[RMDB]
RNA sequence: GGGAACGACUCGAGUAGAGUCGAAAACACGUGGGACAUCUCGAACAUCGCCGGAUGGCAUCCGACCGCCGAGGACUUCGCGUCCGCGGUCGCCGCGCUCGACUGCCCUGCGGUGCGGCGCCCGGUCCUCAAGUUCGGCCACUCCGACGGCCCCGGACUGUUGCGUAUACUUCGGUAUACGCAACAGAAAAGAAACAACAACAACAAC
Reactivity to 2A3 in 0.01 (KOAc 150mM, MgCl2 10mM, bicine 150mM(pH8.5), 24C), signal-to-noise 1, nucleotides 027 to 156: c080a010c040g080u250g000g000g030a010c020a220u090c060u050c100g060a060a020c040a180u060c060g050c030c000g000g030a020u050g030g000c020a070u060c020c000g010a030c000c020g160c050c040g000a010g000g020a000c000u100u040c000g020c140g070u170c050c040g050c030g010g060u070c010g020c000c010g000c000g000c050u160c090g150a240c110u110g010c020c000c010u010g000c040g000g010u020g000c000g010g010c000g000c000c040c000g010g000u010c010c000u010c020a040a030g030u070u010c010g010g000c010c000a050c090u010c010c000g050a020c050g020g000c020c050c000c000g050g040a000

Chemical mapping of a 207-nucleotide RNA with 2A3.
The RNA was probed in 150 mM KOAc, 10 mM MgCl2 and 150 mM bicine (pH 8.5) at 24 C.
2A3 adducts were read by reverse transcription with SuperScript II with manganese.
Values cover nucleotides 27 to 156.